[RMDB]
The data come from the RNA Mapping Database (RMDB), library M2RFPK.
The record gives the reactivity of an RNA of 207 nucleotides to 2A3 and DMS.
The reactions ran in a buffer of 150 mM KOAc, 10 mM MgCl2 and 150 mM bicine (pH 8.5), at 24 C.
RNA sequence: GGGAACGACUCGAGUAGAGUCGAAAAUUGCCGAUCGGUAUGGAUGCCACCGUGAAGGCUCAAUCACACAAGUGCCAACGAUAACGAGGCGCUCGCUAUUGCUGCGUAACUGACGGCCUGACGGUCUAAAACAGAUUCGUGUUCGCACGAAUCUGAAGGGAUAGUUAAACUUCGGUUUAACUAUCCCAAAAGAAACAACAACAACAAC
Reactivity to 2A3 in 0.01 (KOAc 150mM, MgCl2 10mM, bicine 150mM(pH8.5), 24C), signal-to-noise 5, nucleotides 027 to 156: u050u070g040c010c010g040a130u120c060g000g020u060a070u140g100g080a090u160g060c010c010a010c010c010g040u040g050a140a010g010g000c010u020c060a050a110u100c000a020c020a030c030a150a030g010u000g020c000c000a050a030c060g050a060u080a150a040c050g020a020g220g040c080g080c070u020c020g000c010u040a050u120u180g040c040u020g000c030g030u010a070a030c020u030g070a030c030g010g000c020c000u020g020a010c010g010g030u040c050u080a080a110a020a040c000a000g000a000u000u000c000g000u020g010u020u070c120g000c080a000c000g010a000a000u000c000u000g000a020a030
Reactivity to DMS in 0.01 (KOAc 150mM, MgCl2 10mM, bicine 150mM(pH8.5), 24C), signal-to-noise 2, nucleotides 027 to 156: u010u000g010c020c010g010a130u000c000g040g000u000a100u000g010g020a060u010g020c020c030a090c000c000g030u000g000a210a120g030g060c010u000c060a110a110u030c070a120c060a120c060a080a120g060u000g020c030c010a030a070c030g000a060u000a020a090c050g000a130g040g000c130g060c040u000c000g040c010u000a070u010u000g000c020u000g010c060g010u010a050a120c060u000g010a100c070g000g010c010c010u000g000a100c060g010g020u020c040u000a030a040a050a260c020a010g020a030u000u000c000g050u000g040u000u000c250g000c000a020c000g020a050a010u000c000u000g040a060a080
Description: For 2A3, 3,734 sequencing reads were counted. The DMS profile rests on 3,192 reads.